[RMDB]
This 177-nucleotide RNA was probed chemically with 2A3 and DMS. It was measured as part of the RMDB library OK1LIB. For DMS, 7,638 sequencing reads were counted. The reactions ran in a buffer of 150 mM KOAc, 10 mM MgCl2 and 150 mM bicine (pH 8.5), at 24 C.
RNA sequence: GGGAACGACUCGAGUAGAGUCGAAAAGACACUCUUUGCAGAUGACCUCCUCGUUGGUGCGUGUCGGUAAUGUUGUCAGUCACAGGCAACAGUUAACGAUCUGCAUAAAUAAAAAGAGAAGAACAAAGACUAUAUCCCAUUUCGAUGGGAUAUAGUCAAAAGAAACAACAACAACAAC
Reactivity to 2A3 in 0.01 (KOAc 150mM, MgCl2 10mM, bicine 150mM(pH8.5), 24C), signal-to-noise 7, nucleotides 027 to 126: g020a000c030a010c040u030c010u060u080u050g000c020a020g010a060u030g020a040c020c000u040c010c000u090c060g150u110u210g120g040u130g030c050g010u050g040u040c020g020g020u100a110a060u020g000u000u000g000u010c010a030g110u160c040a050c040a110g010g010c000a010a010c000a000g030u000u080a020a000c030g000a020u010c000u010g020c010a000u060a010a080a010u070a010a050a000a000a000g080a000g030a160a030g070a060a010c050a070a080a010
Reactivity to DMS in 0.01 (KOAc 150mM, MgCl2 10mM, bicine 150mM(pH8.5), 24C), signal-to-noise 4, nucleotides 027 to 126: g000a070c150a020c000u010c010u000u010u010g030c020a020g000a050u000g000a050c020c000u000c060c060u010c130g010u020u030g010g000u000g010c200g020u010g000u000c000g000g000u000a060a090u030g000u030u000g000u010c000a050g010u030c230a080c200a090g000g000c010a000a000c000a040g000u000u010a030a010c030g010a020u000c010u000g000c000a070u070a050a090a090u020a030a080a050a070a020g000a080g020a110a080g000a100a090c110a070a120a090